[RMDB]
RNA sequence: GGGAACGACUCGAGUAGAGUCGAAAAUCCACUAUGAAUCUAGUCACUAAAUAAACACAAUUAGCUACUGUGUGUAAUAGUGAGUGUUGAUAACACAAAAUAAUAGUAUACUUUUGGAAGAUUAUACGCGCCCUUGCUCCGUUCGCGGAGCAAGGAAGGUAGAUAUAUCGUUCGCGAUAUAUCUACCAAAAGAAACAACAACAACAAC
Reactivity to 2A3 in 0.01 (KOAc 150mM, MgCl2 10mM, bicine 150mM(pH8.5), 24C), signal-to-noise 7, nucleotides 027 to 156: u020c020c000a030c060u200a180u200g170a110a040u030c080u090a050g100u030c010a000c000u010a000a020a070u050a020a060a000c010a000c000a020a110u130u070a110g050c050u150a050c050u020g010u000g010u000g020u030a010a040u010a010g000u010g030a030g010u020g030u030u040g120a130u210a280a020c040a010c010a030a120a040a040u240a070a070u060a120g040u040a030u040a090c030u060u090u130u150g120g040a080a030g020a070u140u060a030u060a080c060g030c010g080c050c000c000u000u000g000c000u000c000c010g020u030u030c070g010c030g100g000a000g000c000a000a000g000g000a000a000
Reactivity to DMS in 0.01 (KOAc 150mM, MgCl2 10mM, bicine 150mM(pH8.5), 24C), signal-to-noise 3, nucleotides 027 to 156: u000c040c010a120c080u010a060u000g010a130a120u000c070u010a150g010u000c010a020c010u000a000a030a050u010a160a260a010c000a010c010a030a040u000u000a180g010c210u010a040c040u000g050u010g000u000g010u000a120a270u000a010g010u000g000a080g040u000g010u000u000g010a100u000a100a180c050a090c050a080a070a060a110u010a070a200u010a140g010u000a090u010a050c090u000u000u000u000g010g020a140a160g010a100u000u010a060u000a050c060g030c150g000c110c000c000u000u000g010c000u000c020c020g030u000u010c300g030c020g030g030a010g000c000a010a010g000g010a010a000